This 177-nucleotide RNA was probed chemically with 2A3 and DMS.
For DMS, 67,773 sequencing reads were counted.
The data come from the RNA Mapping Database (RMDB), library OK1LIB.
Conditions: 150 mM KOAc, 10 mM MgCl2 and 150 mM bicine (pH 8.5), 24 C.

RNA sequence: GGGAACGACUCGAGUAGAGUCGAAAAGCUAGCCAGCGCACGAUGAGACUGCCAUGACGUCUAGCCUGCGUCUCAACUAGUCUCCAUCAAUCAAAACGCUGGGAUUGAUGUACGAGACUAGUACACAGAGUAAUCACUUGUUCGCAGGUGGUUACUCAAAAGAAACAACAACAACAAC
Reactivity to 2A3 in 0.01 (KOAc 150mM, MgCl2 10mM, bicine 150mM(pH8.5), 24C), signal-to-noise 9, nucleotides 027 to 126: g030c030u040a010g020c010c010a010g010c020g010c030a030c050g050a050u120g010a020g030a050c030u030g020c020c010a030u060g020a020c030g020u020c020u020a020g010c000c010u030g020c020g050u000c010u000c030a030a020c000u000a000g000u000c000u000c000c000a000u000c000a000a000u000c010a010a060a090a130c130g040c120u130g050g020g000a000u000u000g000a000u000g030u110a100c120g000a000g000a000c000u000a000g010u050a010c110a010c020a030
Reactivity to DMS in 0.01 (KOAc 150mM, MgCl2 10mM, bicine 150mM(pH8.5), 24C), signal-to-noise 9, nucleotides 027 to 126: g010c030u000a070g010c020c020a060g000c060g010c050a050c090g010a110u020g010a110g000a090c090u000g010c030c060a060u020g000a060c070g010u010c040u010a100g000c020c020u010g000c060g000u000c020u010c080a110a040c010u000a000g010u000c000u010c010c010a010u000c000a010a010u000c010a070a060a090a120c150g010c120u020g000g010g000a010u000u000g000a010u000g000u040a100c170g000a020g010a010c000u000a000g000u010a050c220a110c240a140